[RMDB]
RNA sequence: GGGAACGACUCGAGUAGAGUCGAAAAGUGAUAAGAUUCAUCCAAGGCUAAAUAUAAGUUAGGAGAUCGAUAGCAUACAAGUACCGUGAGGGAAAGGUGAAAAGAACUUUGAAAAAAGGUUUAAAAGCCUUAUCGUUCUGUUCGCAGAACGAUAAGGAAAAGAAACAACAACAACAAC
Reactivity to DMS in 0.01 (KOAc 150mM, MgCl2 10mM, bicine 150mM(pH8.5), 24C), signal-to-noise 4, nucleotides 027 to 126: g010u010g020a100u000a060a130g010a040u000u020c080a110u010c010c010a060a110g000g020c000u000a050a140a110u010a080u040a060a050g000u010u010a170g040g010a030g000a030u000c010g000a120u040a050g000c020a020u000a050c030a050a050g000u020a130c030c030g020u030g000a180g000g030g000a030a040a070g000g010u000g000a020a050a080a100g000a070a040c010u010u000u010g000a000a030a070a080a040a020g000g000u000u000u000a030a060a070a090g010
Reactivity to 2A3 in 0.01 (KOAc 150mM, MgCl2 10mM, bicine 150mM(pH8.5), 24C), signal-to-noise 3, nucleotides 027 to 126: g110u070g020a030u010a070a100g040a010u050u120c060a050u000c060c000a100a070g060g000c020u060a050a150a090u280a130u060a170a020g030u060u070a040g000g010a010g000a000u010c010g020a040u080a020g040c010a020u270a180c030a040a050g000u000a000c010c030g070u170g090a120g000g040g000a010a020a010g070g000u070g060a020a030a000a020g010a000a020c020u060u060u140g070a100a000a000a000a000a000g020g040u030u010u070a070a060a040a010g030